Structure probing data (2A3 and DMS) for a 177-nucleotide construct.
Conditions: 150 mM KOAc, 10 mM MgCl2 and 150 mM bicine (pH 8.5), 24 C.
In probing experiments dimethyl sulfate is read out at A N1 and C N3, which are open when not base-paired.
For DMS, 1,816 sequencing reads were counted.
RNA sequence: GGGAACGACUCGAGUAGAGUCGAAAAGAAGGUAUGAACGUUGGAAGGCGCUUCCGUGUGAGCGGAAUUCUUUCAUACCAAGGAGUUGGCGGACGGAUGUGGCCGAGAACGGGAUAACCGGAAGAAAGGGUAAAAGAUUCUUCGGAAUCUUUUACCCAAAAGAAACAACAACAACAAC
Reactivity to 2A3 in 0.01 (KOAc 150mM, MgCl2 10mM, bicine 150mM(pH8.5), 24C), signal-to-noise 2, nucleotides 027 to 126: g050a010a000g000g020u000a000u100g030a010a000c000g000u020u050g050g040a230a120g000g050c020g060c000u000u100c000c010g020u100g050u080g100a110g040c030g000g160a020a020u040u000c000u000u070u030c070a110u170a120c040c000a000a010g000g080a020g020u140u130g070g030c000g040g070a020c010g000g020a050u070g010u000g170g020c000c000g010a010g000a000a000c010g000g000g000a010u070a070a080c030c040g040g090a030a000g020a020a030a010
Reactivity to DMS in 0.01 (KOAc 150mM, MgCl2 10mM, bicine 150mM(pH8.5), 24C), signal-to-noise 2, nucleotides 027 to 126: g040a300a000g030g000u000a000u000g000a120a120c100g000u020u000g020g040a120a300g000g000c040g000c040u000u000c020c000g000u000g000u040g000a140g000c000g060g030a010a000u020u030c020u010u000u000c050a160u040a160c300c300a030a030g010g000a050g000u020u000g000g000c060g000g010a020c050g030g000a000u000g000u010g010g040c000c010g010a080g000a080a030c000g020g000g000a190u080a030a060c000c000g000g010a140a040g000a050a070a130
Source information
DMS adducts were read by reverse transcription with MarathonRT.